[RMDB]
Structure probing data (2A3 and DMS) for a 177-nucleotide construct.
2A3 adducts were read by reverse transcription with SuperScript II with manganese.
The reactions ran in a buffer of 150 mM KOAc, 10 mM MgCl2 and 150 mM bicine (pH 8.5), at 24 C.
RNA sequence: GGGAACGACUCGAGUAGAGUCGAAAAGAUAUGGACGCGAAGUUCAAUGAUGCUGGGAACUACUCGGAAACGAGCCCAGUUGAGAAUUAAGCGUCCUAAGUCAAACCUCACGGUUCGCCGUGAGGAAGAACGUUAGCAUGUUCGCAUGCUAACGUUCAAAAGAAACAACAACAACAAC
Reactivity to 2A3 in 0.01 (KOAc 150mM, MgCl2 10mM, bicine 150mM(pH8.5), 24C), signal-to-noise 2, nucleotides 027 to 126: g030a000u060a010u100g010g000a000c010g010c000g050a080a030g030u000u040c040a090a300u170g010a020u080g010c000u040g000g000g000a130a140c110u230a090c010u300c000g030g040a040a050a040c020g000a020g000c020c000c000a020g010u000u020g010a030g030a010a020u120u070a080a010g000c000g000u010c000c010u000a000a010g000u010c000a090a020a120c000c000u000c000a010c000g000g100u060u080c300g040c120c000g020u010g000a000g030g000a020a020
Reactivity to DMS in 0.01 (KOAc 150mM, MgCl2 10mM, bicine 150mM(pH8.5), 24C), signal-to-noise 2, nucleotides 027 to 126: g020a030u000a280u010g000g000a040c020g040c010g020a230a100g000u000u000c010a110a130u020g000a040u010g010c000u000g010g000g020a170a040c090u000a270c050u000c050g000g000a100a080a210c010g000a020g030c010c000c000a000g000u000u000g000a150g000a040a000u000u000a030a300g020c000g010u000c000c000u000a010a050g000u000c070a110a130a170c000c000u000c000a000c000g020g020u000u000c300g020c000c010g000u000g010a000g020g020a060a020